[RMDB]
RNA sequence: GGGAACGACUCGAGUAGAGUCGAAAAGAUGUAUGAACGCAAGACAGUUUGGCAUCUCCCUUUAAGGCCUUGUUCGAUUAGAAACUUCAAUGACAAGUCUUAUUGUGAGGCAUUCGUCGAAAUAAGACGCCCAGUAUCAAUUCGUUGAUACUGGGCGAAAAGAAACAACAACAACAAC
Reactivity to DMS in 0.01 (KOAc 150mM, MgCl2 10mM, bicine 150mM(pH8.5), 24C), signal-to-noise 2, nucleotides 027 to 126: g000a020u010g030u010a010u010g030a010a020c040g000c080a150a110g030a060c140a150g040u000u000u040g050g020c020a020u030c010u000c000c010c000u020u040u000a070a070g010g050c120c010u000u000g000u000u000c040g020a030u000u000a130g020a070a080a070c090u000u000c030a050a040u010g000a070c120a060a070g010u000c130u000u000a060u000u000g020u030g000a050g010g000c130a050u010u010c030g010u000c010g020a030a040a020u000a000a010g010a150
Reactivity to 2A3 in 0.01 (KOAc 150mM, MgCl2 10mM, bicine 150mM(pH8.5), 24C), signal-to-noise 3, nucleotides 027 to 126: g020a010u020g020u030a300u160g010a010a000c010g030c040a000a050g060a180c060a050g040u030u020u010g030g040c020a000u000c020u000c000c020c000u010u060u000a080a060g090g010c030c020u010u040g030u050u100c010g010a080u070u080a040g040a050a100a050c010u050u020c050a060a270u160g030a050c040a180a050g050u020c030u000u000a020u000u010g020u040g040a020g020g020c080a080u070u140c050g030u010c020g100a030a050a030u170a060a000g010a010

The record gives the reactivity of an RNA of 177 nucleotides to DMS and 2A3. It was measured as part of the RMDB libraries RFM100 and RFMREP. Conditions: 150 mM KOAc, 10 mM MgCl2 and 150 mM bicine (pH 8.5), 24 C.